Structure probing data (2A3 and DMS) for a 170-nucleotide construct. The data come from the RNA Mapping Database (RMDB), library 15KLIB. Reactivities are given for positions 27 through 129. DMS adducts were read by reverse transcription with MarathonRT. The RNA was probed in 150 mM KOAc, 10 mM MgCl2 and 150 mM bicine (pH 8.5) at 24 C.

RNA sequence: GGGAACGACUCGAGUAGAGUCGAAAACUAUGUUGUUUGGUAUGAUUAAGAAGCUCGACAACGAUGUUCUUAAUGGUAUCAUUUCUAACGCUAGGAAUGGUUGUAUACCUCUUAGUGUCAUCCCACUCAAGUGAUAAGUUCGCUUAUCACAAAAGAAACAACAACAACAAC
Reactivity to 2A3 in 0.01 (KOAc 150mM, MgCl2 10mM, bicine 150mM(pH8.5), 24C), signal-to-noise 9, nucleotides 027 to 129: c060u050a090u150g060u050u020g000u000u050u050g010g000u010a020u020g150a040u250u000a010a030g020a030a010g180c030u010c010g060a050c050a190a090c070g080a110u300g050u050u010c000u010u020a010a010u040g100g000u020a000u020c000a030u040u090u050c070u110a050a020c020g010c060u030a000g010g050a150a150u220g070g050u080u130g130u220a110u090a080c000c000u000c010u010u010a000g000u010g010u040c030a100u020c010c030c000a030c020u100c080a180a050
Reactivity to DMS in 0.01 (KOAc 150mM, MgCl2 10mM, bicine 150mM(pH8.5), 24C), signal-to-noise 5, nucleotides 027 to 129: c060u020a100u030g000u000u000g050u010u000u000g000g000u020a040u030g020a060u010u000a010a050g000a060a020g050c080u040c040g030a130c300a140a130c000g040a000u040g000u000u010c020u000u000a000a000u020g000g000u040a030u000c020a060u000u000u000c020u070a100a100c080g000c060u030a000g000g050a050a090u070g040g030u010u030g050u000a140u080a000c000c000u030c020u000u050a020g040u000g030u030c020a040u020c020c020c010a130c110u000c180a100a140